[RMDB]
RNA sequence: GGGAACGACUCGAGUAGAGUCGAAAAUUUAUUAUGUCAAGGGGAAUGUCGCACCUAACAUCGGGGUUAACAGAGACUUUUUCGUAAAUCUUGAUUUGCGGUGCUUCCACCUGCAAACUCUGUACCCCCGUCAGUUUUAUUUCGAUAAAACUGACGGAAAAGAAACAACAACAACAAC
Reactivity to 2A3 in 0.01 (KOAc 150mM, MgCl2 10mM, bicine 150mM(pH8.5), 24C), signal-to-noise 3, nucleotides 027 to 126: u130u090u080a190u100u020a100u160g120u120c070a070a020g060g010g000g030a000a120u160g110u300c020g000c010a020c020c000u020a050a050c000a050u050c010g000g000g000g010u020u030a060a010c060a040g050a050g170a300c080u270u190u010u040u040c010g030u040a000a080a050u030c040u060u050g030a050u050u040u060g050c070g000g000u000g000c000u070u030c080c040a060c000c000u000g000c010a020a020a110c060u040c050u040g050u130a140c000c000c000
Reactivity to DMS in 0.01 (KOAc 150mM, MgCl2 10mM, bicine 150mM(pH8.5), 24C), signal-to-noise 2, nucleotides 027 to 126: u020u030u080a100u030u020a060u030g020u020c030a020a060g010g000g000g010a050a050u050g030u040c070g030c080a020c020c000u000a200a060c180a030u000c050g030g000g000g010u010u000a030a020c050a070g000a060g020a130c270u030u030u000u010u000c080g010u010a060a020a060u020c060u000u000g000a120u000u000u000g010c100g000g010u010g000c090u000u030c030c050a090c000c020u000g030c040a060a070a070c080u010c070u000g000u000a120c020c010c000
Chemical mapping of a 177-nucleotide RNA with 2A3 and DMS. For 2A3 the reverse transcriptase was SuperScript II with manganese. The 2A3 profile rests on 1,964 reads.